[RMDB]
RNA sequence: GGGAACGACUCGAGUAGAGUCGAAAAGUGGGUCAUGAAACAGUUCAGGGCAUGUCGAGCACCAGUACGCUCGUAAAACCACUGGAAACAAUACAAACGCCAACGACGAGCGUUUCGCUCUCGCCGCUUAAGCGGUGAGCCGCUGCACUGAUCUGUCGUAUUGUUAUAAGUUCGCUUAUAACAAUACAAAAGAAACAACAACAACAAC
Reactivity to DMS in 0.01 (KOAc 150mM, MgCl2 10mM, bicine 150mM(pH8.5), 24C), signal-to-noise 4, nucleotides 027 to 156: g000u000g010g020g010u000c040a130u000g030a160a060a070c040a070g010u000u000c030a050g000g010g040c020a080u000g020u000c020g010a060g000c030a100c070c030a170g030u000a090c090g020c000u000c040g020u000a040a040a120a070c020c010a080c050u010g010g000a160a100a110c100a050a240u000a130c070a050a050a060c050g000c030c020a050a100c020g000a040c030g010a040g030c020g010u000u000u000c070g010c070u000c010u000c000g010c010c000g020c010u000u010a090a120g040c010g020g000u000g000a050g010c090c090g020c020u000g010c010a060c050u000g000a190u000c010u000g020u000c050
Reactivity to 2A3 in 0.01 (KOAc 150mM, MgCl2 10mM, bicine 150mM(pH8.5), 24C), signal-to-noise 9, nucleotides 027 to 156: g040u050g000g030g040u090c070a110u140g100a070a070a040c010a010g010u030u030c010a010g000g010g010c020a020u090g080u210c020g010a040g020c030a040c050c010a020g020u030a010c010g000c000u020c020g050u050a040a040a030a050c020c010a010c020u010g000g000a050a080a000c070a030a050u240a090c070a050a100a010c050g020c020c010a080a040c090g110a010c030g010a030g020c000g010u060u070u070c040g010c010u010c000u000c020g000c010c000g040c060u300u290a240a050g000c000g000g000u010g000a000g000c010c030g020c020u020g000c010a010c040u020g010a040u010c010u010g040u050c030